Source information: The data come from the RNA Mapping Database (RMDB), libraries RFM100 and RFMREP. This 177-nucleotide RNA was probed chemically with 2A3 and DMS. Conditions: 150 mM KOAc, 10 mM MgCl2 and 150 mM bicine (pH 8.5), 24 C.

[RMDB]
RNA sequence: GGGAACGACUCGAGUAGAGUCGAAAAAUUUAACUCGCAGAUUCACUCCUGAGUUAAACUUUUACUGGGAGUUAAAUUUUAACUCAUGGUGACGUGGGCGAAUCUCGAACGUUCGUUUCUGGAUCCAGCUAAAACUACUAUUCGUAGUAGUUUUAGCAAAAGAAACAACAACAACAAC
Reactivity to 2A3 in 0.01 (KOAc 150mM, MgCl2 10mM, bicine 150mM(pH8.5), 24C), signal-to-noise 8, nucleotides 027 to 126: a000u090u090u040a040a020c010u010c030g060c040a020g060a160u110u040c020a020c060u100c040c040u040g020a020g020u020u030a040a050a030c010u020u020u060u160a040c020u080g080g190g060a130g020u010u030a000a010a020u010u010u010u010a010a010c010u010c010a040u120g040g020u070g040a040c050g040u090g020g040g000c030g040a030a050u020c010u010c040g030a090a070c070g010u040u040c040g000u000u000u000c000u000g020g000a020u040c060c030a010
Reactivity to DMS in 0.01 (KOAc 150mM, MgCl2 10mM, bicine 150mM(pH8.5), 24C), signal-to-noise 3, nucleotides 027 to 126: a050u010u010u010a030a040c020u000c010g010c070a050g000a190u020u010c070a040c060u010c060c070u010g010a040g000u000u000a040a020a110c080u000u000u010u010a040c020u000g000g010g010a080g020u010u010a000a010a030u000u000u010u000a040a100c020u000c010a040u000g010g000u000g010a110c120g030u000g000g000g010c030g000a080a080u000c010u000c030g010a080a090c190g010u000u000c120g020u000u000u000c000u000g010g000a300u010c140c190a070